The record gives the reactivity of an RNA of 177 nucleotides to 2A3 and DMS. The reactions ran in a buffer of 150 mM KOAc, 10 mM MgCl2 and 150 mM bicine (pH 8.5), at 24 C. It was measured as part of the RMDB library OK2TRN. The 2A3 profile rests on 5,129 reads.

RNA sequence: GGGAACGACUCGAGUAGAGUCGAAAAGACGUGCGCGGCAGUGGCCAGGCAUUCAGCCGUACGCAGACGCUCAGCGACGCCUUCAAACGCUGGUUCGGCGACAGCAGGGUGGUGGACGCCGAGGGCGCUGCUCGAAUUAUUUCGAUAAUUCGAGCAGAAAAGAAACAACAACAACAAC
Reactivity to 2A3 in 0.01 (KOAc 150mM, MgCl2 10mM, bicine 150mM(pH8.5), 24C), signal-to-noise 3, nucleotides 027 to 126: g080a020c040g040u040g020c050g000c030g060g000c050a050g050u060g090g000c020c020a060g030g090c020a020u120u060c050a030g020c020c000g020u030a040c060g000c020a020g020a110c060g020c030u030c080a020g020c020g030a040c030g030c010c000u060u080c040a130a140a080c060g000c020u030g020g070u060u060c030g020g000c000g020a010c010a010g040c030a030g120g060g000u080g010g040u030g000g000a050c020g010c030c000g010a050g010g020g010c050g000
Reactivity to DMS in 0.01 (KOAc 150mM, MgCl2 10mM, bicine 150mM(pH8.5), 24C), signal-to-noise 5, nucleotides 027 to 126: g020a090c080g020u000g000c040g040c040g010g030c040a090g030u010g000g000c030c060a070g000g000c050a090u000u000c150a120g030c030c030g010u000a100c140g020c030a070g020a130c070g010c040u000c040a100g010c020g020a080c060g010c030c030u000u000c070a070a090a150c120g010c020u000g000g010u010u000c010g000g010c010g000a110c040a030g030c020a120g010g010g010u000g000g000u000g000g000a100c030g000c020c010g000a080g000g000g010c050g010